The record gives the reactivity of an RNA of 177 nucleotides to 2A3 and DMS. DMS adducts were read by reverse transcription with MarathonRT. Conditions: 150 mM KOAc, 10 mM MgCl2 and 150 mM bicine (pH 8.5), 24 C.

RNA sequence: GGGAACGACUCGAGUAGAGUCGAAAAAAUCGACGAUUGCACUUUUGCCCAUGCUUGUAGGUGCACUCAGCACCACGUUUUGACCAGACUUGAGCAGAUCGAAUAUGUGGAACUGCAUUGAGUGGAAACUACUAGGCGAGUUCGCUCGCCUAGUAGUAAAAGAAACAACAACAACAAC
Reactivity to 2A3 in 0.01 (KOAc 150mM, MgCl2 10mM, bicine 150mM(pH8.5), 24C), signal-to-noise 1, nucleotides 027 to 126: a000a020u120c020g050a000c080g030a040u020u300g000c010a020c040u000u100u170u040g010c030c010c020a040u050g070c060u070u120g060u110a100g000g020u020g000c000a070c090u140c040a020g030c000a000c040c010a010c040g040u000u030u010u080g060a010c030c030a020g020a170c000u110u080g040a020g000c040a000g000a070u040c030g000a070a050u170a090u280g100u190g090g060a050a020c040u020g050c030a240u040u060g010a010g050u040g000g070a160a220
Reactivity to DMS in 0.01 (KOAc 150mM, MgCl2 10mM, bicine 150mM(pH8.5), 24C), signal-to-noise 2, nucleotides 027 to 126: a060a070u020c040g010a120c070g010a080u000u010g000c050a030c060u010u010u010u000g000c000c010c030a070u000g010c060u010u000g010u000a060g010g020u010g020c010a060c130u010c100a110g020c030a080c000c000a090c060g000u000u000u000u030g000a050c000c040a170g010a100c070u010u000g010a060g040c010a050g000a060u000c000g010a070a070u000a060u000g030u000g000g000a100a100c090u000g000c010a060u000u000g020a020g010u000g030g000a120a070